An RNA of 177 nucleotides, treated with 2A3 and DMS and read out base by base.
The reactions ran in a buffer of 150 mM KOAc, 10 mM MgCl2 and 150 mM bicine (pH 8.5), at 24 C.
For DMS the reverse transcriptase was MarathonRT.

RNA sequence: GGGAACGACUCGAGUAGAGUCGAAAAUCUGAGUUUUUCGUUCAAGUUUGGUUGAAAUCGGCUUGAGGUAUAUGAACGUGGUUGGGAUAUGGAGAUUGGGAGAUCAAAGAAGCGAAAAUACCUGAGAGUGUAUUUCUUCCUUCGGGAAGAAAUACACAAAAGAAACAACAACAACAAC
Reactivity to 2A3 in 0.01 (KOAc 150mM, MgCl2 10mM, bicine 150mM(pH8.5), 24C), signal-to-noise 1, nucleotides 027 to 126: u170c020u020g000a030g030u050u000u050u050u050c110g020u020u050c050a000a000g020u210u080u000g190g000u060u170g140a040a040a000u030c030g040g000c170u000u190g110a030g010g040u060a140u080a000u300g080a160a060c000g000u300g000g140u000u120g020g000g000a030u000a160u300g120g000a000g020a080u000u110g030g060g000a030g000a000u060c050a000a050a100g100a020a000g080c020g050a000a000a000a000u060a020c020c020u060g050a030g000a000
Reactivity to DMS in 0.01 (KOAc 150mM, MgCl2 10mM, bicine 150mM(pH8.5), 24C), signal-to-noise 1, nucleotides 027 to 126: u050c020u000g000a220g020u000u000u020u020u000c060g000u040u000c020a050a090g000u020u000u000g030g000u040u020g000a000a040a100u020c000g000g020c040u000u030g010a020g020g010u000a120u040a040u000g000a070a100c070g000u000g030g010u030u020g000g000g020a090u010a020u000g000g000a040g000a090u020u020g020g010g000a050g040a010u010c120a030a020a150g030a120a090g000c080g050a030a040a030a020u030a060c000c070u000g020a060g020a220